[RMDB]
RNA sequence: GGGAACGACUCGAGUAGAGUCGAAAAGCGCUCCUGAACGUGACUUCAGAAGACGGGCGCCGACAACUUAGAUUGUCAAGGCGACAGUGUAGUGACACUGGGUAAUCUAAGUUACCAAUCGCCGGCGCGUUGAGUCACGUCAACAACCGUCGAGCGAGUAUACUAUCCCAUUCGUGGGAUAGUAUACAAAAGAAACAACAACAACAAC
Reactivity to DMS in 0.01 (KOAc 150mM, MgCl2 10mM, bicine 150mM(pH8.5), 24C), signal-to-noise 2, nucleotides 027 to 156: g000c110g040c010u000c000c020u000g010a070a030c000g070u000g010a030c010u000u010c060a100g000a080a120g000a190c040g040g020g020c010g000c000c000g010a010c020a080a040c000u010u010a030g020a040u010u010g030u010c060a060a120g000g000c050g000a200c000a090g040u000g020u010a200g020u000g020a230c020a050c010u040g000g000g020u020a010a040u000c020u000a030a050g000u000u000a140c100c110a140a140u010c100g040c000c000g050g020c000g010c060g020u010u010g020a070g000u000c010a020c050g000u010c000a020a040c000a050a060c040c020g010u000c050g000a070g020c010g020a180
Reactivity to 2A3 in 0.01 (KOAc 150mM, MgCl2 10mM, bicine 150mM(pH8.5), 24C), signal-to-noise 4, nucleotides 027 to 156: g080c010g020c030u020c030c020u030g020a060a000c010g010u010g010a020c010u150u090c180a140g030a290a020g050a110c040g040g040g000c000g000c000c010g010a010c030a010a000c000u020u020a010g010a020u050u030g050u050c060a100a130g200g060c070g070a050c020a010g000u000g010u080a240g120u210g190a030c000a000c000u000g030g000g020u030a000a000u000c010u010a020a010g000u000u030a030c020c020a040a020u080c060g000c000c000g010g000c000g000c020g030u030u080g010a010g000u010c010a000c000g000u010c000a000a040c000a010a050c010c000g030u040c020g010a010g040c030g020a010
The record gives the reactivity of an RNA of 207 nucleotides to DMS and 2A3. Values are in units of 0.01, from 0 to 300, in steps of 10. The reactions ran in a buffer of 150 mM KOAc, 10 mM MgCl2 and 150 mM bicine (pH 8.5), at 24 C. Source: RMDB library OK3TST, as collected in RNAgym. The 2A3 profile rests on 3,989 reads.